[RMDB]
RNA sequence: GGGAACGACUCGAGUAGAGUCGAAAAUAAACGCAUCGCAUUACCUGCCUACCCUGACAGAUCCGCGGAAACAUAAAACUAACGUGUGCGUUGCCAUAUGAACGAUCGUCUGCGGCUGGAGAGCAGACUGCUAGUGGACGUUCGCGUCCACUAGCAGAAAAGAAACAACAACAACAAC
Reactivity to 2A3 in 0.01 (KOAc 150mM, MgCl2 10mM, bicine 150mM(pH8.5), 24C), signal-to-noise 3, nucleotides 027 to 126: u160a000a100a010c000g070c000a060u020c010g000c040a020u000u180a030c000c010u000g000c000c000u050a070c010c000c010u000g000a010c000a040g020a030u030c010c010g000c020g020g040a020a100a020c010a020u210a160a080a080a000c070u100a080a010c040g040u060g000u030g030c010g010u010u030g000c030c010a200u250a070u160g070a030a020c020g040a100u090c040g000u000c030u030g000c000g010g030c010u030g020g010a070g010a000g060c010a020g060a070
Reactivity to DMS in 0.01 (KOAc 150mM, MgCl2 10mM, bicine 150mM(pH8.5), 24C), signal-to-noise 2, nucleotides 027 to 126: u050a030a090a020c100g060c020a020u010c020g040c050a130u000u050a000c000c020u000g010c030c020u000a080c000c000c000u030g000a060c070a060g010a080u010c060c110g040c040g030g030a110a110a140c060a090u040a090a020a110a110c130u000a090a050c160g000u000g000u030g000c030g000u010u000g000c050c120a160u020a090u050g010a090a100c130g000a030u030c060g000u000c000u000g000c000g000g000c080u030g000g000a050g000a160g030c020a070g000a130